About this RNA:
Source: RMDB library RFM100, as collected in RNAgym. This 177-nucleotide RNA was probed chemically with DMS and 2A3. The reactions ran in a buffer of 150 mM KOAc, 10 mM MgCl2 and 150 mM bicine (pH 8.5), at 24 C. 2A3 adducts were read by reverse transcription with SuperScript II with manganese. For 2A3, 989 sequencing reads were counted.
[RMDB]
RNA sequence: GGGAACGACUCGAGUAGAGUCGAAAAGAAUUUUUUAACAUGUGAAUUUUGACAAUCUUCUCCGUGGAAGCACCUCCUCUUCAUCGCUUCCAUUCAUUAACGAGAACCACCUGCCCCUGCGCUAUUGAGACUAUCGACAAUUCGUUGUCGAUAGUCUAAAAGAAACAACAACAACAAC
Reactivity to DMS in 0.01 (KOAc 150mM, MgCl2 10mM, bicine 150mM(pH8.5), 24C), signal-to-noise 2, nucleotides 027 to 126: g000a050a020u000u000u030u010u070u000a030a110c080a030u030g000u000g060a040a040u000u000u000u000g040a040c060a080a030u000c020u000u000c000u020c010c060g000u000g020g040a040a000g000c030a150c160c070u000c060c020u010c020u000u000c080a100u000c140g000c030u010u000c000c010a040u030u040c070a060u000u000a060a050c050g000a090g050a080a140c000c000a040c000c020u000g040c020c030c000c040u030g010c050g020c020u060a030u010u030g000
Reactivity to 2A3 in 0.01 (KOAc 150mM, MgCl2 10mM, bicine 150mM(pH8.5), 24C), signal-to-noise 2, nucleotides 027 to 126: g030a080a070u130u070u070u070u090u210a100a130c050a140u190g090u000g070a230a180u090u090u040u120g120a030c030a050a130u020c050u060u000c020u000c010c020g010u000g060g010a000a000g000c000a030c000c040u090c010c010u070c000u080u080c010a120u120c060g010c000u000u000c030c000a000u090u070c000a000u000u220a060a020c100g010a040g000a040a000c030c000a050c000c020u030g000c000c050c000c000u010g000c010g000c010u090a180u020u120g010